Structure probing data (2A3) for a 207-nucleotide construct. For 2A3 the reverse transcriptase was SuperScript II with manganese. The reactions ran in a buffer of 150 mM KOAc, 10 mM MgCl2 and 150 mM bicine (pH 8.5), at 24 C.
RNA sequence: GGGAACGACUCGAGUAGAGUCGAAAAUGUACAGGACCAAGAUCAGGAUGGUCUUCGUCCUGAUACCAGCCAGCGUGGAAGCCUGUAUUCGGGUCGCUAUGGUUGACCCGGAACCAAUCGCUGGGGGUCUACCAGUAGCAGAUGACGGUUACUGUCGGCCCUUUGAGAAGUUCGCUUCUCAAAGGGCAAAAGAAACAACAACAACAAC
Reactivity to 2A3 in 0.01 (KOAc 150mM, MgCl2 10mM, bicine 150mM(pH8.5), 24C), signal-to-noise 1, nucleotides 027 to 156: u300g050u090a110c010a000g020g000a010c000c010a030a000g000a020u020c030a040g300g000a090u200g080g040u030c000u030u030c000g020u020c000c000u000g010a010u010a060c000c000a000g150c000c000a060g060c010g000u030g020g020a040a130g010c010c030u060g040u090a270u000u050c000g010g000g000u030c010g010c060u140a120u300g200g070u100u260g000a010c010c000c000g000g000a010a000c000c010a000a090u110c030g010c020u000g000g000g020g000g010u020c010u010a050c030c030a000g060u050a000g000c030a010g040a150u170g040a090c010g120g000u020u000a000c040u010g090u160c040g010